[RMDB]
Chemical mapping of a 177-nucleotide RNA with 2A3 and DMS.
The reactions ran in a buffer of 150 mM KOAc, 10 mM MgCl2 and 150 mM bicine (pH 8.5), at 24 C.
The data come from the RNA Mapping Database (RMDB), library OK1LIB.
For 2A3 the reverse transcriptase was SuperScript II with manganese.
High 2A3 reactivity points to a flexible backbone, as in loops and unpaired stretches.
For 2A3, 35,176 sequencing reads were counted.
RNA sequence: GGGAACGACUCGAGUAGAGUCGAAAAGCCAGCGUGAUUGGCGCCUAACGUCGGGCUUGGUCGCAUCCAGGAUGGCCGUCCGCAGAUGUGCUGGCGGCUCGGCGGUGGUGGCCGCCGAGACGACGGCACCCAAUGUUAAUUUCGAUUAACAUUGGGUAAAAGAAACAACAACAACAAC
Reactivity to 2A3 in 0.01 (KOAc 150mM, MgCl2 10mM, bicine 150mM(pH8.5), 24C), signal-to-noise 9, nucleotides 027 to 126: g040c010c000a020g010c090g120u180g090a300u070u090g040g000c010g040c010c010u090a170a050c050g080u090c030g060g010g020c030u080u180g040g010u050c050g010c060a060u080c050c040a060g110g050a140u120g060g010c020c010g010u010c010c000g000c020a060g040a250u210g040u060g070c010u010g010g010c000g000g000c000u000c010g010g000c090g000g000u050g050g180u140g130g010c000c000g000c000c000g000a000g000a000c000g000a000c000g010g000c010
Reactivity to DMS in 0.01 (KOAc 150mM, MgCl2 10mM, bicine 150mM(pH8.5), 24C), signal-to-noise 5, nucleotides 027 to 126: g000c000c010a060g000c080g030u030g000a110u020u010g010g010c020g010c020c010u010a100a080c120g000u020c030g010g000g020c030u010u030g020g020u000c100g010c090a100u020c070c080a160g000g020a100u020g010g010c030c020g000u000c000c010g020c070a140g000a100u030g020u000g000c010u000g010g010c000g000g000c000u000c010g000g000c000g000g000u010g010g020u020g010g010c000c000g000c000c000g000a010g000a030c020g000a020c010g000g000c020